The record gives the reactivity of an RNA of 177 nucleotides to 2A3. For 2A3 the reverse transcriptase was SuperScript II with manganese. The reactions ran in a buffer of 150 mM KOAc, 10 mM MgCl2 and 150 mM bicine (pH 8.5), at 24 C. Source: RMDB library OK1LIB, as collected in RNAgym.
[RMDB]
RNA sequence: GGGAACGACUCGAGUAGAGUCGAAAACUUUGAGUCGAUUGCUGCGACCGACACCUCUGCGGCAUAGUCAAGUGCGUCGCUAGCAAGACUUGUCCAAGACCCACAAAGAAUGUGACGCCCACCGUUCCCCUAGACGAGACUUCGGUCUCGUCUAGGGAAAAGAAACAACAACAACAAC
Reactivity to 2A3 in 0.01 (KOAc 150mM, MgCl2 10mM, bicine 150mM(pH8.5), 24C), signal-to-noise 3, nucleotides 027 to 126: c020u030u060u240g020a010g020u010c020g150a200u050u000g030c000u000g010c000g010a020c040c030g080a090c020a000c000c020u030c000u000g000c010g170g020c110a300u220a120g070u180c030a150a020g000u010g000c000g000u000c000g000c030u030a000g000c000a000a000g000a010c000u010u050g030u010c030c000a000a010g020a150c000c070c000a060c060a010a130a060g170a040a050u180g000u080g030a020c020g080c020c000c000a030c020c000g050u060u090c000